[RMDB]
Source: RMDB library RFMREP, as collected in RNAgym. This 177-nucleotide RNA was probed chemically with 2A3 and DMS.
RNA sequence: GGGAACGACUCGAGUAGAGUCGAAAAAACUCUGGUGGAGGCUUGUCGCAAUGCUGACGUGCAAAUCGCUUGUCUAACUUGAGUAUAGGGGCGAAAGACUAAUCGAACAACCUAGUAGCUGGUUCCUCAGUAAGAUCAUGUUCGCAUGAUCUUACUGAAAAGAAACAACAACAACAAC
Reactivity to 2A3 in 0.01 (KOAc 150mM, MgCl2 10mM, bicine 150mM(pH8.5), 24C), signal-to-noise 4, nucleotides 027 to 126: a000a000c020u030c010u040g010g020u030g030g130a030g020g000c000u040u040g090u190c020g000c040a040a110u090g000c030u090g100a090c070g130u140g020c020a010a020a080u050c020g000c020u040u040g000u000c020u000a070a070c010u050u070g030a000g020u050a040u080a110g040g010g000g000c020g020a040a030a010g030a030c050u090a090a080u070c040g030a060a030c000a010a030c030c010u030a040g020u050a000g040c030u030g070g000u010u010c010c000u020
Reactivity to DMS in 0.01 (KOAc 150mM, MgCl2 10mM, bicine 150mM(pH8.5), 24C), signal-to-noise 3, nucleotides 027 to 126: a040a050c030u000c010u010g020g020u000g010g030a070g000g000c040u010u000g020u000c060g030c030a080a110u000g000c030u010g020a080c140g010u020g020c070a020a060a200u000c060g010c030u020u000g010u000c020u010a080a070c030u000u000g010a090g020u000a080u000a100g020g000g000g000c030g000a070a070a100g020a040c130u000a060a080u010c110g000a160a050c090a090a080c070c040u000a070g010u000a070g020c050u000g010g010u000u000c010c020u000
About this RNA
The RNA was probed in 150 mM KOAc, 10 mM MgCl2 and 150 mM bicine (pH 8.5) at 24 C. DMS adducts were read by reverse transcription with MarathonRT. For 2A3 the reverse transcriptase was SuperScript II with manganese.